[RMDB]
RNA sequence: GGGAACGACUCGAGUAGAGUCGAAAAUGCGUGCAGCACUACCACCCUUAGCACCAGAUGUCGAGGAGCCGGCCCUCGAAGCAGAUGUCGACUUAAUGCUACAGGAAGCCGGGGCAGGUACGGUGGAUCGCUUAGAUAGAUUCGUCUAUCUAAGCGAAAAAGAAACAACAACAACAAC
Reactivity to 2A3 in 0.01 (KOAc 150mM, MgCl2 10mM, bicine 150mM(pH8.5), 24C), signal-to-noise 3, nucleotides 027 to 126: u060g010c030g020u080g070c080a040g000c010a040c060u060a060c020c010a050c010c010c000u040u100a020g030c010a030c040c030a080g040a250u090g030u100c030g030a040g030g030a030g100c010c020g020g010c000c000c010u040c040g040a050a020g000c020a010g030a120u150g060u140c020g020a060c010u040u140a100a030u090g010c000u020a040c020a020g000g060a130a020g000c010c010g000g000g020g000c010a010g020g040u070a030c030g020g010u050g010g040a070
Reactivity to DMS in 0.01 (KOAc 150mM, MgCl2 10mM, bicine 150mM(pH8.5), 24C), signal-to-noise 7, nucleotides 027 to 126: u010g010c080g010u010g000c080a100g000c040a060c070u000a110c060c040a150c060c020c050u010u000a100g000c030a070c050c070a100g000a140u010g020u000c050g000a070g000g000a160g010c010c010g010g000c030c010c010u000c040g020a060a070g020c050a030g000a140u010g010u000c050g010a060c080u010u000a100a150u010g000c020u010a110c160a050g010g010a130a110g000c030c020g000g010g000g000c040a050g010g000u000a040c110g020g010u010g000g010a170

This 177-nucleotide RNA was probed chemically with 2A3 and DMS. It was measured as part of the RMDB library OK2TST. The reactions ran in a buffer of 150 mM KOAc, 10 mM MgCl2 and 150 mM bicine (pH 8.5), at 24 C. DMS adducts were read by reverse transcription with MarathonRT.